[RMDB]
RNA sequence: GGGAACGACUCGAGUAGAGUCGAAAACAACAAAACAAAACGGGCCACGGAAAGAAAACCGAAAGGUACGCAAAGAUCAUGCAAGUACGAAAGCGUCGCCGGCACCGAAUCGUACUAAACAAACAAAGCAUCAGUAUUAUUUCGAUAAUACUGAUGCAAAAGAAACAACAACAACAAC
Reactivity to DMS in 0.01 (KOAc 150mM, MgCl2 10mM, bicine 150mM(pH8.5), 24C), signal-to-noise 4, nucleotides 027 to 126: c040a160a170c150a080a090a120a100c180a060a040a070a100c040g000g000g000c000c010a110c010g000g000a020a100a080g030a090a030a080a080c020c010g000a100a040a030g020g000u000a020c040g010c050a050a070a080g010a050u020c110a060u020g020c130a070a100g000u030a030c050g000a020a110a080g030c010g010u000c070g020c040c060g000g000c010a050c030c000g020a040a100u010c000g010u030a010c000u000a090a070a120c150a040a070a080c230a080a070a060
Reactivity to 2A3 in 0.01 (KOAc 150mM, MgCl2 10mM, bicine 150mM(pH8.5), 24C), signal-to-noise 7, nucleotides 027 to 126: c040a010a020c020a000a130a010a010c060a010a080a010a020c010g020g020g000c020c010a030c030g040g070a090a100a090g160a040a140a060a000c010c000g040a100a020a000g030g010u060a010c010g000c020a040a060a090g070a090u150c040a020u170g050c060a070a020g010u020a030c020g030a090a050a020g040c020g030u030c010g010c070c000g010g000c020a030c020c000g030a010a020u040c000g010u020a000c000u090a020a090a060c090a050a090a010c040a040a120a000